[RMDB]
RNA sequence: GGGAACGACUCGAGUAGAGUCGAAAAACUAAUAUUGGCAAUAUCUAUACUGCUAAUAAUUUCAUGUAAAUGGUAUGUAGACAAUACCAUUGAUGAAGCAACUGUAGAAAGUAAAUCAGCACUAACACUGCUUAAGGUGAUUCGUCACCUUAAGCAGAAAAGAAACAACAACAACAAC
Reactivity to DMS in 0.01 (KOAc 150mM, MgCl2 10mM, bicine 150mM(pH8.5), 24C), signal-to-noise 2, nucleotides 027 to 126: a100c100u010a020a080u010a030u000u000g000g000c020a030a050u000a030u020c130u000a210u020a050c040u000g000c010u000a010a030u000a020a120u030u010u000c020a030u000g000u000a070a010a010u010g010g010u000a000u000g010u030a100g000a150c200a120a010u000a010c010c000a000u010u000g010a020u020g010a060a100g020c110a040a090c040u000g010u010a120g000a080a070a110g020u010a050a090a080u040c040a080g040c130a040c180u030a020a090c210a070
Reactivity to 2A3 in 0.01 (KOAc 150mM, MgCl2 10mM, bicine 150mM(pH8.5), 24C), signal-to-noise 2, nucleotides 027 to 126: a010c080u100a050a150u060a040u100u020g000g050c010a010a030u020a020u080c010u100a110u080a140c030u020g000c000u020a020a000u070a030a070u040u090u050c020a040u040g080u180a000a050a000u000g020g000u010a010u010g110u070a050g020a160c050a120a020u010a010c000c000a020u010u020g010a000u000g010a020a010g030c010a030a050c050u060g020u050a020g050a080a070a010g060u100a010a080a110u080c040a050g060c030a020c110u030a090a010c060a010
This 177-nucleotide RNA was probed chemically with DMS and 2A3. Values cover nucleotides 27 to 126. For DMS the reverse transcriptase was MarathonRT. The reactions ran in a buffer of 150 mM KOAc, 10 mM MgCl2 and 150 mM bicine (pH 8.5), at 24 C. For 2A3 the reverse transcriptase was SuperScript II with manganese. High DMS reactivity at an A or C suggests that its Watson-Crick edge is free.